[RMDB]
RNA sequence: GGGAACGACUCGAGUAGAGUCGAAAAUUAACCAGAGUAUUCAACACCAGUGGAUUGUGUGACGGUUGCUAUAGUUCAAUACCUGUGAAUAAUCCAUUCGUAAUUGCAGGUUCAAGAUUCCGUGAGAGACUGGACGUAGGUUCGCCUACGUCCAGUCAAAAGAAACAACAACAACAAC
Reactivity to DMS in 0.01 (KOAc 150mM, MgCl2 10mM, bicine 150mM(pH8.5), 24C), signal-to-noise 1, nucleotides 027 to 126: u030u020a180a130c070c040a160g020a160g000u030a070u010u010c050a080a070c060a060c030c050a080g020u020g010g000a020u000u000g010u000g010u010g030a070c200g000g010u000u000g020c080u000a040u010a050g000u000u000c100a050a090u020a030c000c000u000g030u000g000a060a110u010a040a060u020c100c040a070u010u000c180g010u000a060a050u000u010g020c020a010g000g020u000u000c110a060a090g010a170u020u000c030c010g020u000g010a110g010a180

The record gives the reactivity of an RNA of 177 nucleotides to DMS. Source: RMDB library OK2TRN, as collected in RNAgym. For DMS the reverse transcriptase was MarathonRT. The reactions ran in a buffer of 150 mM KOAc, 10 mM MgCl2 and 150 mM bicine (pH 8.5), at 24 C.